[RMDB]
RNA sequence: GGGAACGACUCGAGUAGAGUCGAAAAGUUGUCCCAAUGAUCCAGUGGGAAGGUAUGUAAGUUUUCUUUGAAGUGACACAGGUUCGAUUCCGCGUCCUUGAGUUUCUGAGAUAAAAAGUUGCAGGCCGUGUUCAAAAAACUUCGGUUUUUUGAACACAAAAGAAACAACAACAACAAC
Reactivity to 2A3 in 0.01 (KOAc 150mM, MgCl2 10mM, bicine 150mM(pH8.5), 24C), signal-to-noise 2, nucleotides 027 to 126: g090u090u080g050u040c020c000c000a000a020u050g020a040u040c050c030a030g040u180g020g030g000a050a000g000g010u060a030u130g020u000a000a140g060u000u020u040u030c060u050u030u140g060a050a040g040u060g080a010c010a000c010a080g030g000u130u030c030g020a120u160u040c040c020g000c010g050u050c000c030u030u020g010a000g040u000u040u000c030u010g070a070g010a030u100a100a070a020a000a010g010u040u010g030c000a010g030g000c010c010
Reactivity to DMS in 0.01 (KOAc 150mM, MgCl2 10mM, bicine 150mM(pH8.5), 24C), signal-to-noise 2, nucleotides 027 to 126: g030u010u020g050u000c000c000c000a050a050u010g000a190u010c030c110a090g000u010g030g000g010a090a120g010g000u000a040u000g000u000a090a030g000u020u010u010u010c070u000u000u000g000a110a140g000u000g000a130c060a020c040a060g040g000u000u000c060g000a160u000u010c080c100g000c020g000u000c040c000u030u000g010a080g010u000u000u000c020u030g000a120g000a070u030a020a080a060a090a020g000u010u000g000c050a070g010g040c080c140
Structure probing data (2A3 and DMS) for a 177-nucleotide construct. The DMS profile rests on 1,884 reads. The reactions ran in a buffer of 150 mM KOAc, 10 mM MgCl2 and 150 mM bicine (pH 8.5), at 24 C. DMS adducts were read by reverse transcription with MarathonRT.